An RNA of 177 nucleotides, treated with DMS and 2A3 and read out base by base.
RNA sequence: GGGAACGACUCGAGUAGAGUCGAAAAGCCGAGCACGCGCCCGGCGGCGGUGCGCAGCGUGCGAACGGUCAGUUCACCGGCGAGGUGCCGCUUGUACUCCGCGGUGCCGCGGACGUCGGUCACCGGCACGUCAACUACCUUUCGAGGUAGUUGACGUAAAAGAAACAACAACAACAAC
Reactivity to DMS in 0.01 (KOAc 150mM, MgCl2 10mM, bicine 150mM(pH8.5), 24C), signal-to-noise 3, nucleotides 027 to 126: g020c030c010g000a140g010c000a040c020g000c020g040c070c020c050g000g000c130g000g010c020g010g010u020g000c070g000c050a120g010c030g000u010g020c000g000a060a110c000g000g000u020c100a120g000u000u020c050a090c030c000g020g020c000g000a130g000g030u000g000c000c000g000c020u010u020g030u020a090c100u040c100c110g010c030g010g040u000g000c040c000g030c090g020g030a200c050g010u000c030g000g000u030c070a050c050c020g000g000c120
Reactivity to 2A3 in 0.01 (KOAc 150mM, MgCl2 10mM, bicine 150mM(pH8.5), 24C), signal-to-noise 3, nucleotides 027 to 126: g010c000c010g000a020g020c030a010c030g050c000g020c000c030c030g080g020c040g040g050c030g000g020u080g010c080g020c050a030g020c010g000u030g030c000g030a100a050c010g020g090u120c060a040g020u060u080c020a010c040c000g020g010c030g020a100g030g020u020g000c000c020g010c000u050u100g070u100a140c100u050c070c030g000c000g000g030u040g020c020c010g010c060g060g050a090c010g010u040c020g000g020u030c010a010c030c000g040g000c040

Conditions: 150 mM KOAc, 10 mM MgCl2 and 150 mM bicine (pH 8.5), 24 C.